[RMDB]
RNA sequence: GGGAACGACUCGAGUAGAGUCGAAAAUCAAGGCUGAUUGUGUGGGUUGUUCCCACAAUACCGGACUCUAAAGGAUUUGUGAAAGCAACAAUAAUAGAUCAAAACAAGCUGACUCCUAAAGAAAAGCAAUAGGUUAGAGAUUCGUCUCUAACCUAUUAAAAGAAACAACAACAACAAC
Reactivity to DMS in 0.01 (KOAc 150mM, MgCl2 10mM, bicine 150mM(pH8.5), 24C), signal-to-noise 5, nucleotides 027 to 126: u000c080a130a150g020g020c070u000g010a060u010u000g000u000g000u010g000g000g000u000u000g000u000u010c020c020c000a030c100a050a040u010a120c060c040g000g010a100c090u000c100u000a040a150a140g020g010a210u000u010u000g010u010g010a070a090a080g000c030a030a060c090a050a080u000a070a070u000a050g000a050u000c050a040a070a070a110c180a080a070g000c020u000g010a090c060u000c010c010u000a030a070a090g000a080a100a090a090g010c190
Reactivity to 2A3 in 0.01 (KOAc 150mM, MgCl2 10mM, bicine 150mM(pH8.5), 24C), signal-to-noise 2, nucleotides 027 to 126: u070c010a040a050g060g000c020u050g030a120u120u070g110u020g020u190g070g010g000u050u050g030u120u100c020c010c000a000c030a010a010u070a050c040c010g020g070a050c050u030c020u120a060a080a000g050g030a100u020u070u100g020u000g040a070a040a030g030c020a020a020c010a040a000u100a160a090u040a070g080a060u070c040a040a070a010a110c020a090a000g060c010u020g020a060c030u050c000c000u040a060a120a060g070a030a030a010a010g110c020
Background:
The record gives the reactivity of an RNA of 177 nucleotides to DMS and 2A3. Reactivities are given for positions 27 through 126. The data come from the RNA Mapping Database (RMDB), library OK2TST. The 2A3 profile rests on 2,056 reads. For DMS the reverse transcriptase was MarathonRT. The DMS profile rests on 3,948 reads.